This 177-nucleotide RNA was probed chemically with 2A3. The 2A3 profile rests on 842 reads. It was measured as part of the RMDB library RFM100. Values cover nucleotides 27 to 126. For 2A3 the reverse transcriptase was SuperScript II with manganese.

[RMDB]
RNA sequence: GGGAACGACUCGAGUAGAGUCGAAAACCACAAUGGUCGAAACGUGAUACCUCGCUUAAGGGAUGUGGGUGCCACGUCAGCGAAGAUUAAGUCAAAAGUGGUUUUGGAGGCCAAAACUGCCAAAGAUACCAACCACUACCUUCGGGUAGUGGUUGGUAAAAGAAACAACAACAACAAC
Reactivity to 2A3 in 0.01 (KOAc 150mM, MgCl2 10mM, bicine 150mM(pH8.5), 24C), signal-to-noise 2, nucleotides 027 to 126: c000c000a030c010a000a210u140g090g040u080c000g000a050a150a090c000g000u000g000a030u030a000c000c000u140c000g040c010u110u180a100a080g180g000g080a130u260g000u170g060g000g000u020g120c100c000a010c020g000u010c000a040g010c000g020a010a010g070a230u080u180a090a000g030u020c040a030a030a030a030g000u000g000g000u000u000u030u000g040g010a130g090g150c070c020a000a000a070a000c100u090g000c000c000a070a050a050g000a040u120